[RMDB]
RNA sequence: GGGAACGACUCGAGUAGAGUCGAAAAUGAUCGAGAGAUCUAACGAUGUACGCGAGUCAAUCGCACAGACUCGAGCGAAAGCUCGGUCGAAAGACCGCGUACAUCGGUCGGCAAGUGUCUAGUCAAAAGUAAUUAUAGUCUUCGGACUAUAAUUACUAAAAGAAACAACAACAACAAC
Reactivity to 2A3 in 0.01 (KOAc 150mM, MgCl2 10mM, bicine 150mM(pH8.5), 24C), signal-to-noise 5, nucleotides 027 to 126: u100g000a010u010c020g000a020g000a000g000a100u000c000u030a090a030c010g000a000u000g010u010a000c000g010c010g050a080g070u020c020a000a050u060c040g030c090a120c040a130g040a020c050u090c270g000a010g000c000g060a120a010a000g000c000u010c000g000g000u010c020g010a000a000a000g000a000c000c000g000c000g000u010a000c000a000u000c000g000g010u050c020g030g040c060a160a180g070u060g060u170c050u110a050g070u090c040a120a080a040
Reactivity to DMS in 0.01 (KOAc 150mM, MgCl2 10mM, bicine 150mM(pH8.5), 24C), signal-to-noise 9, nucleotides 027 to 126: u010g010a010u000c010g010a290g010a250g010a010u000c000u000a080a110c010g010a010u000g010u000a000c000g020c010g000a110g010u000c000a030a230u000c080g020c270a110c250a210g000a010c030u010c020g020a010g010c000g000a120a090a160g000c000u000c000g010g010u000c000g000a030a050a300g000a010c000c010g010c000g000u000a000c000a000u000c000g000g010u000c060g010g010c080a060a100g010u000g000u010c040u000a080g010u010c070a060a090a110